[RMDB]
RNA sequence: GGGAACGACUCGAGUAGAGUCGAAAACUCGUUCACGGUUAGGUCUGUCUCUGGCAGAGCAGACUGUCAGGAGGAAGAGGUCACCAUCUUCACGAAGCCAAAGCCAAAUUCCGCCUUGUCCUGUAAAACGUACUGCGGGAUUCGUCCCGCAGUACGUAAAAGAAACAACAACAACAAC
Reactivity to DMS in 0.01 (KOAc 150mM, MgCl2 10mM, bicine 150mM(pH8.5), 24C), signal-to-noise 1, nucleotides 027 to 126: c000u000c110g000u060u010c040a030c010g000g000u010u000a130g020g050u000c010u000g000u110c000u000c070u030g010g000c190a000g000a110g040c000a180g000a020c000u020g020u000c110a080g000g000a190g000g050a060a050g000a010g030g000u110c060a120c000c000a080u000c070u000u040c040a130c210g000a160a040g000c010c070a060a120a100g000c110c040a040a040a170u000u000c000c000g030c000c000u020u000g000u000c000c070u000g020u000a140a080a000
Reactivity to 2A3 in 0.01 (KOAc 150mM, MgCl2 10mM, bicine 150mM(pH8.5), 24C), signal-to-noise 2, nucleotides 027 to 126: c000u000c000g150u150u130c050a030c170g030g010u050u130a020g010g000u000c000u020g070u030c000u010c020u170g110g000c050a020g000a000g040c020a010g000a020c000u000g000u000c010a070g020g060a030g000g040a000a040g030a040g070g030u040c010a020c070c000a200u050c010u050u100c040a060c180g010a030a010g030c000c080a050a000a000g020c000c000a000a060a110u080u000c000c030g010c010c000u000u080g020u040c000c000u040g110u300a110a110a000